This 177-nucleotide RNA was probed chemically with 2A3 and DMS.

RNA sequence: GGGAACGACUCGAGUAGAGUCGAAAAUAGGUCAGGCAGCCUUUAUUUGCACCUGAGUAUCAACACAAGUGAACACUGUUUAUCUGUCGGUGCUAAAAUUGCACACUCAGAUGAUACUAGGCUGCUGGUAGUGGUUAUUCUUCGGAAUAACCACUACAAAAGAAACAACAACAACAAC
Reactivity to 2A3 in 0.01 (KOAc 150mM, MgCl2 10mM, bicine 150mM(pH8.5), 24C), signal-to-noise 5, nucleotides 027 to 126: u150a020g080g080u110c070a020g030g010c010a010g000c010c000u080u080u040a200u040u110u190g050c020a010c010c000u020g000a000g010u030a050u170c040a070a080c000a010c020a170a050g020u040g070a050a010c250a050c260u190g050u070u040u030a060u060c030u030g090u080c050g040g000u010g000c010u050a160a150a100a150u210u150g000c010a000c000a010c010u010c000a000g010a030u040g000a010u030a050c040u000a020g000g000c000u000g000c000u010g040
Reactivity to DMS in 0.01 (KOAc 150mM, MgCl2 10mM, bicine 150mM(pH8.5), 24C), signal-to-noise 4, nucleotides 027 to 126: u020a070g000g000u010c100a200g010g000c000a010g010c000c010u000u000u000a060u020u010u010g010c040a030c030c010u000g000a010g000u000a070u010c200a080a100c170a030c050a040a070g020u000g010a050a050c050a170c200u010g000u000u000u000a040u010c050u000g010u000c100g010g010u000g000c000u020a030a050a080a100u010u010g000c020a030c040a060c010u000c010a010g000a020u000g000a030u010a040c200u000a010g000g020c000u000g000c000u000g010
The 2A3 profile rests on 5,414 reads.
The DMS profile rests on 4,497 reads.